[RMDB]
RNA sequence: GGGAACGACUCGAGUAGAGUCGAAAAAGUGGACGCUGUGGGUUGCUUCGAGGGUGAUGAAGAAGAGGAAGAGGAUGAUGAGGAUGAAGAAGAGAUCGAGGUUGAGGAGGAACUCUGCAAGCAGGUGACUGACACCUGAUUUCGAUCAGGUGUCAGUAAAAGAAACAACAACAACAAC
Reactivity to 2A3 in 0.01 (KOAc 150mM, MgCl2 10mM, bicine 150mM(pH8.5), 24C), signal-to-noise 4, nucleotides 027 to 126: a000g110u100g030g000a040c010g000c070u050g020u130g030g030g000u050u110g020c030u030u040c020g030a120g000g020g010u090g030a050u050g040a040a080g050a040a020g030a050g040g020a030a020g010a010g070g030a030u080g000a010u080g010a050g040g010a030u090g040a040a050g030a040a000g050a010g000a010u030c020g010a020g010g030u050u060g030a030g000g000a010g000g000a050a020c000u020c030u110g010c040a030a080g020c030a010g040g070u040g060
Reactivity to DMS in 0.01 (KOAc 150mM, MgCl2 10mM, bicine 150mM(pH8.5), 24C), signal-to-noise 3, nucleotides 027 to 126: a110g020u030g010g010a090c090g020c080u010g040u000g000g000g000u010u030g040c090u000u000c070g020a140g000g020g030u010g000a080u020g020a090a060g010a070a060g000a070g000g000a050a050g010a070g000g010a060u000g010a060u020g010a080g000g000a050u000g010a050a090g000a080a050g010a070g000a050u030c070g010a050g010g010u010u000g000a070g000g010a050g000g000a080a060c060u010c020u010g020c100a010a070g010c080a060g030g010u020g010
Chemical mapping of a 177-nucleotide RNA with 2A3 and DMS. The 2A3 profile rests on 2,768 reads. The data come from the RNA Mapping Database (RMDB), library OK1LIB.